[RMDB]
RNA sequence: GGGAACGACUCGAGUAGAGUCGAAAAUGCGUAUAGCUAGAUUGCGUUAUCAUGUCGUAACACAUAUUAGCUGACUCGUGACGCCUCCGCGAUCUUUGAGUGGCCAUUGAUACGACACAAUGGUUUGCUGACUGUCUGUCUUCGGACAGACAGUCAGAAAAGAAACAACAACAACAAC
Reactivity to DMS in 0.01 (KOAc 150mM, MgCl2 10mM, bicine 150mM(pH8.5), 24C), signal-to-noise 2, nucleotides 027 to 126: u060g000c020g000u000a060u000a020g010c000u000a010g000a120u000u000g000c040g020u000u000a050u060c130a120u000g090u060c090g010u000a010a000c100a060c080a060u000a080u030u000a030g000c000u000g000a140c140u000c070g000u030g000a140c120g010c030c060u000c020c050g000c210g030a090u020c040u010u000u000g060a090g000u020g030g000c000c000a040u000u010g000a260u000a050c160g000a080c050a030c030a000a020u010g000g000u000u000u000g000
Reactivity to 2A3 in 0.01 (KOAc 150mM, MgCl2 10mM, bicine 150mM(pH8.5), 24C), signal-to-noise 3, nucleotides 027 to 126: u170g000c020g000u050a060u100a170g020c050u070a040g010a120u000u130g010c050g010u030u040a090u100c050a020u070g050u120c030g000u010a070a020c070a010c020a050u140a130u100u080a010g000c010u020g060a100c010u010c020g070u060g030a040c030g030c000c050u040c010c020g040c060g070a100u050c030u010u060u150g080a050g060u030g020g000c000c000a020u000u010g010a020u040a080c040g010a030c020a010c010a030a000u040g010g000u050u000u230g040